This 177-nucleotide RNA was probed chemically with DMS and 2A3. For 2A3 the reverse transcriptase was SuperScript II with manganese. High 2A3 reactivity points to a flexible backbone, as in loops and unpaired stretches. The DMS profile rests on 1,425 reads. Source: RMDB library OK2TST, as collected in RNAgym.
RNA sequence: GGGAACGACUCGAGUAGAGUCGAAAAAAACGUGGACAAUAGCCUUUCCCCCACCCUCAGCUAAUUGUGCCGGAGCUGGGAAGGCAGAGCUGUGUGAAAAGGGGGAAAUUAACAUGCCCCAUUCAGCCAGUACUCUAGACUUCGGUCUAGAGUACUGAAAAGAAACAACAACAACAAC
Reactivity to DMS in 0.01 (KOAc 150mM, MgCl2 10mM, bicine 150mM(pH8.5), 24C), signal-to-noise 2, nucleotides 027 to 126: a020a070a130c150g030u000g010g000a040c100a060a090u010a120g040c120c140u010u000u000c000c000c000c040c010a100c150c030c010u000c000a030g010c020u000a110a170u010u020g020u000g020c000c030g020g010a130g030c060u000g000g000g000a100a090g010g010c020a080g000a060g000c010u000g030u000g020u020g010a050a040a100a130g000g000g010g010g000a010a010a000u000u000a080a090c070a080u000g000c010c000c000c070a220u010u000c050a040g000c120
Reactivity to 2A3 in 0.01 (KOAc 150mM, MgCl2 10mM, bicine 150mM(pH8.5), 24C), signal-to-noise 1, nucleotides 027 to 126: a000a000a000c100g000u050g010g000a060c010a160a230u100a200g100c020c030u000u000u000c000c000c020c000c000a020c030c000c000u000c030a030g000c010u060a130a120u300u210g180u050g080c000c000g070g000a040g020c050u060g000g110g030a000a060g000g010c010a000g020a000g000c000u010g000u010g040u060g140a000a000a140a240g020g000g010g000g010a000a000a010u070u030a050a010c000a000u060g060c000c030c000c030a010u080u070c020a020g010c010